[RMDB]
The data come from the RNA Mapping Database (RMDB), library M2PK50. Structure probing data (DMS and 2A3) for a 177-nucleotide construct. For DMS the reverse transcriptase was MarathonRT. The 2A3 profile rests on 1,818 reads.
RNA sequence: GGGAACGACUCGAGUAGAGUCGAAAACACAUUCUAUUCGUAGAAUGUGGAACGUAGAGAGAUCGACAGCGUCGCAGCUAUGUCGUACGAGGAAGAGCGCGCAGGGAUCGGGCUUCGGCCCGAUCAAUGUUGGUAACUCAUUCGUGAGUUACCAACAAAAAGAAACAACAACAACAAC
Reactivity to DMS in 0.01 (KOAc 150mM, MgCl2 10mM, bicine 150mM(pH8.5), 24C), signal-to-noise 3, nucleotides 027 to 126: c000a010c000a000u000u010c000u000a020u010u010c210g010u000a000g010a010a000u010g030u000g010g010a070a080c120g010u010a080g000a110g000a090g010a070u000c020g000a020c020a050g010c040g020u000c170g020c170a100g010c030u010a050u000g020u000c020g010u000a060c100g000a110g010g020a050a030g010a060g010c020g020c050g000c110a060g000g000g010a010u000c000g010g020g000c000u000u010c210g030g000c010c000c000g030a000u000c010a020a070
Reactivity to 2A3 in 0.01 (KOAc 150mM, MgCl2 10mM, bicine 150mM(pH8.5), 24C), signal-to-noise 2, nucleotides 027 to 126: c000a000c000a010u000u010c000u020a010u030u030c170g090u020a000g020a010a010u010g010u020g010g020a070a020c030g080u180a020g040a010g000a010g010a160u080c020g020a010c000a030g000c010g080u110c060g020c070a030g050c010u160a080u300g050u040c030g010u030a040c060g030a030g050g030a070a020g010a010g020c040g000c010g000c030a030g200g000g000a010u000c000g000g000g000c010u030u040c180g090g010c020c000c000g010a000u010c010a010a000